[RMDB]
RNA sequence: GGGAACGACUCGAGUAGAGUCGAAAAAACCCAAACUGUAUGUGACAGUGAGGGGGCAGGCUAGAUUCCUAUGGGCAAUGUAAAUGAACACUCAUCUGAGGCAUCGUGACCCUAUCACAUCUAGUUAAUUGUGAGAGAAUCUUAUGUCUCUGUUUCAGUUUUACUAACUCUUCGGAGUUAGUAAAACAAAAGAAACAACAACAACAAC
Reactivity to DMS in 0.01 (KOAc 150mM, MgCl2 10mM, bicine 150mM(pH8.5), 24C), signal-to-noise 1, nucleotides 027 to 156: a170a070c000c010c030a080a110a060c020u000g000u000a070u000g030u000g020a120c040a020g000u000g040a300g000g040g000g020g030c070a070g060g010c040u000a100g010a160u000u000c010c040u000a120u000g020g040g040c000a050a110u000g020u000a040a040a150u010g040a140a190c260a130c040u010c020a190u010c210u030g020a070g030g000c030a060u000c030g020u010g010a060c000c020c010u010a050u010c030a010c010a020u020c050u010a140g000u000u000a000a120u010u000g050u000g000a040g000a040g030a010a040u000c070u000u000a060u010g020u020c010u000c020u030g020u010u000u010c020a140
Reactivity to 2A3 in 0.01 (KOAc 150mM, MgCl2 10mM, bicine 150mM(pH8.5), 24C), signal-to-noise 3, nucleotides 027 to 156: a000a020c040c010c000a020a040a010c010u020g000u010a030u060g080u140g140a020c030a060g020u030g060a150g010g000g000g000g050c000a020g070g090c020u070a000g000a030u000u030c000c040u080a060u070g030g000g020c070a030a030u040g000u140a150a150a150u180g090a070a030c040a040c070u050c000a130u030c220u190g020a020g020g000c020a010u030c040g030u030g130a230c020c000c000u050a070u030c010a000c000a020u050c050u060a070g100u070u140a150a130u140u110g050u050g010a020g000a000g040a100a070u030c020u100u110a080u190g050u000c020u030c010u050g020u000u020u000c010a000
This 207-nucleotide RNA was probed chemically with DMS and 2A3. The RNA was probed in 150 mM KOAc, 10 mM MgCl2 and 150 mM bicine (pH 8.5) at 24 C. For DMS the reverse transcriptase was MarathonRT.